[RMDB]
RNA sequence: GGGAACGACUCGAGUAGAGUCGAAAAAGGAUUCGACGGAAUUCAAGAAGCCCAAGGUGCAUGUCGAGGUGCGGUUUGCCUCGUUAAACAGCCGCAACCUAAAGUAAUCGCAAACGACGAUAACUACUCUCUAGCGGCUUAGGCCAGCUAGCGCUCCGCGUAAAAAAGACUUCGGUCUUUUUUACGCAAAAGAAACAACAACAACAAC
Reactivity to 2A3 in 0.01 (KOAc 150mM, MgCl2 10mM, bicine 150mM(pH8.5), 24C), signal-to-noise 2, nucleotides 027 to 156: a000g010g010a030u040u020c010g060a000c110g130g050a030a000u000u010c030a050a150g060a080a000g080c010c000c010a040a060g150g010u190g030c080a100u150g050u120c050g000a010g000g010u000g000c010g000g050u020u040u140g030c010c000u040c030g010u030u020a000a010a000c000a030g000c010c000g010c030a060a130c000c000u060a140a110a030g030u070a080a090u030c040g030c080a260a110a170c110g150a080c020g000a060u020a100a090c030u080a040c000u000c010u000c030u080a030g010c010g070g010c040u040u160a070g000g140c000c000a030g000c040u000a000g000c000g050c060u100c070c080